[RMDB]
RNA sequence: GGGAACGACUCGAGUAGAGUCGAAAAAGAAAGCAACGGGGCUAGCCGGUGGGUGUUCCUCCCCCCGAGAGGGGAAGAGUGAGGCUUAUCCCGGGGAACCCGGCGAAUGCCCCCACAUAGCAGAGUCAUAACACUAUCUUCGGAUAGUGUAAAAGAAACAACAACAACAAC
Reactivity to 2A3 in 0.01 (KOAc 150mM, MgCl2 10mM, bicine 150mM(pH8.5), 24C), signal-to-noise 9, nucleotides 027 to 129: a000g080a020a030a000g030c040a030a060c070g010g000g010g010c000u010a020g010c010c000g010g000u130g030g020g020u040g060u070u050c010c000u000c020c000c000c000c000c000g050a050g060a050g060g000g010g010a050a040g080a020g070u300g010a010g020g000c000u070u130a080u140c000c000c000g020g000g010g010a010a030c010c000c000g000g000c000g010a070a030u140g000c000c000c000c010c000a040c000a050u120a010g020c050a010g020a010g120u070c040a050u070a160
Reactivity to DMS in 0.01 (KOAc 150mM, MgCl2 10mM, bicine 150mM(pH8.5), 24C), signal-to-noise 9, nucleotides 027 to 129: a030g000a100a090a080g010c050a080a070c270g000g000g010g010c000u000a190g000c010c000g020g010u000g020g020g020u000g010u010u020c000c000u000c020c060c020c010c000c020g000a160g000a170g040g010g000g010a050a050g020a100g010u050g000a040g000g030c160u010u000a050u020c010c000c010g000g000g000g010a090a120c180c000c020g020g020c020g020a070a080u010g000c000c010c000c010c070a020c120a070u030a060g000c040a050g010a110g010u040c080a070u020a100